Conditions: 150 mM KOAc, 10 mM MgCl2 and 150 mM bicine (pH 8.5), 24 C.
Chemical mapping of a 177-nucleotide RNA with DMS and 2A3.
2A3 adducts were read by reverse transcription with SuperScript II with manganese.
The 2A3 profile rests on 1,831 reads.
RNA sequence: GGGAACGACUCGAGUAGAGUCGAAAAUCUGGACCGUUCGCGGUCCAGAAACUACCGACAAUGCGACUCGGUAUAUAAACGCAACCCUUGGAAACAAGGGAACACUCUGCUGCUUCGGCAGCAGAAAUCGUACAGGCAUAUUCGUAUGCCUGUACGAAAAAGAAACAACAACAACAAC
Reactivity to DMS in 0.01 (KOAc 150mM, MgCl2 10mM, bicine 150mM(pH8.5), 24C), signal-to-noise 2, nucleotides 027 to 126: u000c010u010g000g010a010c000c000g070u010u030c220g040c020g040g060u010c000c000a000g000a000a050a140c030u000a040c000c010g000a060c300a110a110u020g040c050g040a160c160u010c000g000g010u000a040u000a040u000a030a020a050c090g000c120a070a160c000c000c010u040u000g000g000a120a100a300c030a010a010g000g010g000a150a080c160a140c120u000c000u000g010c000u000g010c000u000u000c180g090g000c000a000g040c010a000g030a000a080a020
Reactivity to 2A3 in 0.01 (KOAc 150mM, MgCl2 10mM, bicine 150mM(pH8.5), 24C), signal-to-noise 2, nucleotides 027 to 126: u000c000u000g010g000a000c010c000g050u060u050c300g000c010g140g000u050c000c010a000g000a010a000a000c000u000a010c010c000g020a040c090a170a260u100g020c040g100a090c140u000c000g010g000u000a050u010a010u060a300a050a050c050g020c040a030a210c000c000c000u000u000g010g010a050a020a010c000a000a010g000g000g000a020a010c010a020c000u060c000u010g010c000u010g000c000u020u050c220g100g000c000a020g000c000a000g010a000a020a000
For DMS the reverse transcriptase was MarathonRT. Reactivities are given for positions 27 through 126.